[RMDB]
RNA sequence: GGGAACGACUCGAGUAGAGUCGAAAAUCGAGAAAAUCCAUAUUUUGAGUCAAGAAUUCAGAUAAUAUACUGAGAUGAUUAGGUAUGGCUGGGUUCUACAAAAACACAAAUAUCCGGCUAGCAAUGACCUCGCUCAUUAUUUCGAUAAUGAGCGAGGAAAAGAAACAACAACAACAAC
Reactivity to DMS in 0.01 (KOAc 150mM, MgCl2 10mM, bicine 150mM(pH8.5), 24C), signal-to-noise 2, nucleotides 027 to 126: u040c050g000a110g000a120a160a120a080u020c000c060a040u000a010u060u000u010u010g000a130g040u000c060a070a060g000a020a060u020u000c000a000g010a020u060a060a080u100a050u030a050c000u030g000a050g080a180u030g000a220u000u020a040g000g030u000a010u000g000g060c070u000g000g000g000u020u000c020u090a060c200a060a000a120a030a110c160a050c040a100a010a040u000a010u030c030c000g050g000c070u000a020g010c060a070a050u000g020a210
Reactivity to 2A3 in 0.01 (KOAc 150mM, MgCl2 10mM, bicine 150mM(pH8.5), 24C), signal-to-noise 3, nucleotides 027 to 126: u190c070g000a010g120a070a160a000a040u030c040c030a050u080a070u050u170u060u110g050a020g060u080c050a080a100g010a070a060u010u010c000a000g020a020u080a300a000u160a060u020a070c030u050g000a010g120a190u300g070a140u160u290a040g010g000u020a010u020g050g000c000u000g030g000g000u020u000c020u020a100c110a000a060a000a040a000c100a020c050a020a120a080u110a000u020c090c080g100g000c110u090a040g050c060a000a250u130g000a070
The record gives the reactivity of an RNA of 177 nucleotides to DMS and 2A3. The data come from the RNA Mapping Database (RMDB), library OK1LIB. The RNA was probed in 150 mM KOAc, 10 mM MgCl2 and 150 mM bicine (pH 8.5) at 24 C. DMS adducts were read by reverse transcription with MarathonRT. For 2A3, 1,476 sequencing reads were counted. The DMS profile rests on 1,668 reads.